[RMDB]
RNA sequence: GGGAACGACUCGAGUAGAGUCGAAAAUUCUGCAAUGUGUAAUUGGUGCUUGAUUAGCCAAGAUUCCAUAACUCACUACCCAGCUCUUAAGAUGGUUCAAACACAUCUUAGCCACUAUGUUCUUAACGAAUAAGCAGAUGUUCGCAUCUGCUUAUUCAAAAGAAACAACAACAACAAC
Reactivity to DMS in 0.01 (KOAc 150mM, MgCl2 10mM, bicine 150mM(pH8.5), 24C), signal-to-noise 3, nucleotides 027 to 126: u010u000c040u010g000c100a100a050u010g040u000g010u010a080a080u010u000g010g020u000g010c060u010u010g010a170u000u010a110g010c100c020a080a070g000a090u000u000c020c030a040u000a050a120c090u000c030a020c050u010a150c080c030c020a110g040c090u000c120u010u000a010a020g000a040u000g000g020u000u000c240a070a070a120c280a070c020a010u000c010u000u000a020g030c140c090a060c190u000a070u010g010u000u000c020u000u000a040a180c280
Reactivity to 2A3 in 0.01 (KOAc 150mM, MgCl2 10mM, bicine 150mM(pH8.5), 24C), signal-to-noise 3, nucleotides 027 to 126: u040u030c010u060g040c020a080a090u100g020u040g010u130a070a090u040u030g000g000u060g010c030u100u100g070a120u050u220a040g080c030c010a020a020g020a190u090u010c010c000a010u020a040a040c010u010c080a030c020u020a040c010c030c010a020g010c020u000c020u110u010a000a000g000a030u000g020g010u110u140c110a070a120a010c050a020c010a120u000c010u020u010a010g030c000c010a060c060u120a150u220g020u070u010c030u040u020a070a040c060